Conditions: 150 mM KOAc, 10 mM MgCl2 and 150 mM bicine (pH 8.5), 24 C. Chemical mapping of a 207-nucleotide RNA with DMS and 2A3. It was measured as part of the RMDB library RNAMAK.
RNA sequence: GGGAACGACUCGAGUAGAGUCGAAAAGAGUGCUUCGGCACUCGCACAGAUAUGGAUGCAAGCAAGGGCGAAUUAUGCAAUGACGUCGGAAACGAUAAGACAGCAUAAUAGCCUGAUGACCUUGCAUCCUAAGUCAUUAUGACCCUUUCGAGGGUAAUUGCAUGUACCUAUUCGUAGGUACAUGCAAAAAAGAAACAACAACAACAAC
Reactivity to DMS in 0.01 (KOAc 150mM, MgCl2 10mM, bicine 150mM(pH8.5), 24C), signal-to-noise 2, nucleotides 027 to 156: g000a030g000u020g020c000u000u000c300g100g050c010a020c010u040c000g000c110a060c120a090g020a080u000a210u000g050g010a030u000g010c010a030a050g000c020a090a180g000g030g000c030g020a140a170u000u010a010u000g040c000a190a070u000g020a140c210g010u000c000g000g000a100a060a290c020g000a090u010a010a240g020a190c050a110g010c000a010u000a010a020u000a300g030c000c000u020g020a040u010g010a080c300c000u000u010g000c040a000u000c000c000u000a000a110g000u000c010a130u000u000a150u010g000a110c000c000c010u000u010u000c140g040a080g010g020g010u000a000a100
Reactivity to 2A3 in 0.01 (KOAc 150mM, MgCl2 10mM, bicine 150mM(pH8.5), 24C), signal-to-noise 3, nucleotides 027 to 156: g010a010g010u030g010c050u120u170c280g070g000c020a010c000u000c000g050c000a170c030a040g070a010u030a030u110g000g010a000u000g000c000a000a020g000c020a090a300g010g000g000c060g020a100a150u000u000a010u000g020c050a080a160u100g030a030c030g050u010c000g000g020a000a120a080c020g000a000u000a020a070g030a090c050a020g170c010a170u020a000a020u010a010g000c000c000u000g010a030u010g000a000c000c000u000u000g000c000a000u000c000c000u000a000a000g000u000c000a000u000u210a150u300g110a050c010c000c000u050u080u090c250g110a030g010g010g060u030a020a130
2A3 adducts were read by reverse transcription with SuperScript II with manganese.
The DMS profile rests on 3,784 reads.